Chemical mapping of a 207-nucleotide RNA with 2A3 and DMS. For 2A3, 2,895 sequencing reads were counted. Reactivities are given for positions 27 through 156. For 2A3 the reverse transcriptase was SuperScript II with manganese. For DMS the reverse transcriptase was MarathonRT. The data come from the RNA Mapping Database (RMDB), library M2RFPK.
RNA sequence: GGGAACGACUCGAGUAGAGUCGAAAAGUGUGCUAUACUAGUAAGGUUGAAUGAAUCAACCCUUGGUGCUUAGCUUCUUUCACCAAGCAUAUUACACGCGGAUAACCGCCAAAGGAGAAAAGCUGAACUGCCCGACGAUUCUUCGGAAUCGUCGGAACAUGUCGAGAAGGUUCGCCUUCUCGACAUGAAAAGAAACAACAACAACAAC
Reactivity to 2A3 in 0.01 (KOAc 150mM, MgCl2 10mM, bicine 150mM(pH8.5), 24C), signal-to-noise 5, nucleotides 027 to 156: g060u030g000u030g030c040u070a040u050a280c100u090a070g130u120a090a080g040g010u030u020g030a060a140u140g080a110a160u090c010a010a010c000c030c010u000u010g010g000u020g030c030u070u060a040g020c000u070u040c020u030u050u020c020a020c000c000a010a010g000c020a010u030a030u140u140a040c040a010c070g020c010g000g020a070u070a280a170c010c010g050c020c050a060a020a000g050g020a040g030a030a080a040a000g030c040u060g040a050a070c060u100g020c010c000c000g000a000c000g000a000u000u000c000u030u050c160g010g000a000a000u000c000g000u000c000g000g000a000a000
Reactivity to DMS in 0.01 (KOAc 150mM, MgCl2 10mM, bicine 150mM(pH8.5), 24C), signal-to-noise 2, nucleotides 027 to 156: g050u000g040u010g000c030u010a100u010a170c070u000a190g050u010a100a090g020g020u010u000g020a070a180u010g000a180a190u000c030a000a010c000c000c040u000u000g010g010u000g030c050u000u010a050g000c010u000u010c020u000u000u000c010a090c030c010a060a040g000c010a150u000a080u000u000a040c040a040c150g030c030g000g030a200u010a090a180c010c030g010c040c100a030a060a080g030g030a050g000a010a090a050a090g000c030u020g020a090a120c060u010g010c060c010c000g010a030c010g000a020u000u000c000u000u030c300g110g000a020a010u000c000g030u000c000g000g000a010a050